[RMDB]
RNA sequence: GGGAACGACUCGAGUAGAGUCGAAAAGAUGAUCCUAUGGAGGUACCAAUCUCAUCCAAGAAGAAAAAGGACAAAGGGCUUAUGAAGACAGUAAAGGAUGCAGCCAUCAAUAUCCUAAGCAACAAGACGUUCUAGGAAUUUUCGAAUUCCUAGAACGAAAAGAAACAACAACAACAAC
Reactivity to 2A3 in 0.01 (KOAc 150mM, MgCl2 10mM, bicine 150mM(pH8.5), 24C), signal-to-noise 3, nucleotides 027 to 126: g050a040u130g010a000u030c010c000u050a100u110g090g020a060g020g040u060a080c000c030a080a050u050c030u030c030a040u060c020c010a020a060g050a080a060g080a020a220a030a010a000g050g000a020c060a010a100a030g060g000g000c010u090u050a070u200g050a050a030g060a030c040a040g050u120a040a130a000g020g000a000u060g000c020a000g000c020c020a020u030c030a010a060u070a020u060c000c020u030a040a050g030c010a000a050c010a040a020g170a050
Reactivity to DMS in 0.01 (KOAc 150mM, MgCl2 10mM, bicine 150mM(pH8.5), 24C), signal-to-noise 3, nucleotides 027 to 126: g020a090u000g020a080u000c020c020u000a090u010g030g010a070g000g020u000a050c060c060a060a130u000c040u000c030a130u000c060c080a060a110g000a110a080g000a030a100a060a090a060g010g010a060c090a030a070a060g000g020g000c070u000u000a060u010g010a100a070g010a070c080a060g010u000a040a060a100g000g010a060u000g020c100a030g010c060c020a030u000c030a030a090u030a060u000c000c000u000a070a110g010c070a030a030c070a060a120g010a210